[RMDB]
RNA sequence: GGGAACGACUCGAGUAGAGUCGAAAAGCAUGCGCCGCACCACGUCUUCAAGGAAUGGGCGGACAGAUACGCCGGCCGAUUCGACAUGGGGUAUGAGCGCUAUCGCGAGAUCGUGCUGGAAAGGCAAAACGUACUGUAUGUUCGCAUACAGUACGUUAAAAGAAACAACAACAACAAC
Reactivity to 2A3 in 0.01 (KOAc 150mM, MgCl2 10mM, bicine 150mM(pH8.5), 24C), signal-to-noise 1, nucleotides 027 to 126: g040c020a020u090g020c020g010c040c010g000c020a110c040c000a020c060g040u010c020u250u130c120a110a100g150g020a090a070u090g110g010g000c020g010g010a030c020a010g210a050u200a070c070g000c000c000g060g030c000c000g050a050u050u050c050g020a020c050a040u050g010g010g000g020u080a110u200g130a090g000c060g000c060u040a050u050c070g000c030g010a030g010a110u100c070g060u090g040c010u050g050g130a160a130a090g070g000c070a060a090
Reactivity to DMS in 0.01 (KOAc 150mM, MgCl2 10mM, bicine 150mM(pH8.5), 24C), signal-to-noise 9, nucleotides 027 to 126: g020c060a060u000g020c040g010c010c010g020c030a120c020c010a030c140g010u000c020u000u010c240a150a160g010g010a050a060u000g010g010g020c000g000g010a050c080a080g010a150u010a100c160g010c010c010g010g020c010c010g000a090u000u000c050g010a040c050a060u000g010g000g010g020u000a060u010g000a130g020c010g010c030u010a030u000c110g030c080g010a110g000a090u000c080g020u000g010c000u000g000g000a050a080a120g000g000c080a060a070